[RMDB]
RNA sequence: GGGAACGACUCGAGUAGAGUCGAAAAAAGAAAGUUGCAGCAUAUACGCGGUGAAUUAUUCGGUGUCAUAGGAGUAGAGUCUUUUGGUAAGAUGCUGAUAAUGAGUAGGGGAGAUGAAAGUUAAUCGAACGUACUUGAGUUUCGACUCAAGUACGUUAAAAGAAACAACAACAACAAC
Reactivity to DMS in 0.01 (KOAc 150mM, MgCl2 10mM, bicine 150mM(pH8.5), 24C), signal-to-noise 6, nucleotides 027 to 126: a050a060g000a080a070a080g030u010u000g010c040a050g010c060a090u010a080u020a070c090g000c050g000g010u000g010a050a060u000u020a080u000u000c070g000g010u010g000u000c030a070u020a080g010g000a050g010u010a060g010a120g010u010c010u000u010u010u010g020g020u010a090a070g010a040u000g010c030u000g000a070u020a070a050u020g000a080g020u000a050g000g000g020g000a060g010a080u020g010a050a040a080g000u020u010a050a140u010c090g000
Reactivity to 2A3 in 0.01 (KOAc 150mM, MgCl2 10mM, bicine 150mM(pH8.5), 24C), signal-to-noise 3, nucleotides 027 to 126: a000a020g210a050a050a000g000u050u060g000c020a010g020c020a020u060a020u020a120c040g020c020g040g010u050g070a060a070u080u050a120u120u110c060g010g040u030g060u070c050a050u050a090g000g040a040g000u070a060g020a030g060u080c030u030u110u060u070g010g000u030a020a070g000a030u070g000c020u000g020a020u040a170a060u150g040a030g000u040a040g000g000g050g000a040g000a000u080g030a040a030a020g060u070u110a020a080u070c080g000